An RNA of 207 nucleotides, treated with 2A3 and DMS and read out base by base. Conditions: 150 mM KOAc, 10 mM MgCl2 and 150 mM bicine (pH 8.5), 24 C. It was measured as part of the RMDB library OK3TST.
[RMDB]
RNA sequence: GGGAACGACUCGAGUAGAGUCGAAAAAUGGGAACAAAGCUUGGAACAGCAGCACAGGGCAGGCACUGAGAAAUAAGCUUAAAGAACAAAACUUCCAACAGAAGGUGGUUGAUGGGAUCGCCUCUGGUAUUAAUGGGGUGGUGGAUCUGGCCAACCACGAAGAGUAGUGUUUCGACACUACUCUUCGAAAAGAAACAACAACAACAAC
Reactivity to 2A3 in 0.01 (KOAc 150mM, MgCl2 10mM, bicine 150mM(pH8.5), 24C), signal-to-noise 5, nucleotides 027 to 156: a000u070g010g000g010a080a010c030a050a050a000g010c020u040u040g020g000a020a040c030a040g020c010a010g000c060a100c050a100g030g000g000c020a010g010g010c010a010c020u040g020a020g070a060a090a030u120a040a010g020c010u030u100a060a060a020g060a070a020c060a050a070a020a030c020u120u040c060c050a070a040c010a100g080a120a030g040g010u010g010g020u020u020g030a110u110g030g020g010a020u010c010g000c000c000u000c020u040g050g000u140a100u170u230a150a160u130g020g000g040g020u040g000g040u040g040g010a030u000c000u020g110g040c030c010a010a010c010c040a020
Reactivity to DMS in 0.01 (KOAc 150mM, MgCl2 10mM, bicine 150mM(pH8.5), 24C), signal-to-noise 2, nucleotides 027 to 156: a070u000g000g000g050a150a110c060a110a060a110g010c050u000u000g060g020a070a080c070a070g010c030a050g040c130a110c070a070g000g030g030c030a080g020g030c030a070c020u000g000a050g010a100a040a110u000a130a050g000c070u000u020a010a070a110g000a060a160c040a040a040a050a080c080u010u000c080c010a040a080c050a160g000a040a070g000g000u000g010g030u010u020g020a120u000g030g030g030a030u000c040g060c010c000u000c020u000g020g000u000a080u020u000a070a110u010g000g010g020g020u000g020g050u020g010g020a060u000c040u010g010g000c040c030a030a070c030c020a160